RNA sequence: GGGAACGACUCGAGUAGAGUCGAAAAAAGGGGCGGGCGACGGUAGGUCAGUAUGCCCCGAAACCCCCGGGCUACACGCGCGCUACAAUGGGCGGGACAAUGGGACCCGACCCCGAAAGGGGAAGGGGGUAUUAAUCAAGUUCGCUUGAUUAAUACCAAAAGAAACAACAACAACAAC
Reactivity to DMS in 0.01 (KOAc 150mM, MgCl2 10mM, bicine 150mM(pH8.5), 24C), signal-to-noise 9, nucleotides 027 to 126: a060a050g000g000g000g010c020g010g000g020c150g000a020c030g000g020u030a080g010g010u000c020a080g020u030a130u050g000c000c000c000c020g010a020a060a100c030c010c000c050c040g010g000g010c060u010a060c080a080c070g010c040g000c040g000c060u010a070c180a100a070u020g000g000g010c050g000g000g010a100c090a080a070u010g000g000g000a280c000c000c010g000a300c000c000c000c000g010a070a090a120g000g000g010g000a030a300g010g000g010
Reactivity to 2A3 in 0.01 (KOAc 150mM, MgCl2 10mM, bicine 150mM(pH8.5), 24C), signal-to-noise 9, nucleotides 027 to 126: a000a000g030g000g000g000c060g020g040g050c040g010a020c020g090g300u300a120g130g080u020c020a010g010u040a060u120g010c000c000c000c000g000a020a010a010c000c000c000c000c000g010g020g030c030u090a030c050a020c040g030c010g010c000g010c030u070a050c070a110a110u120g010g040g020c050g020g000g000a010c040a050a120u070g020g010g030a010c000c000c000g000a010c000c000c000c000g040a050a030a020g000g000g000g000a000a010g000g000g010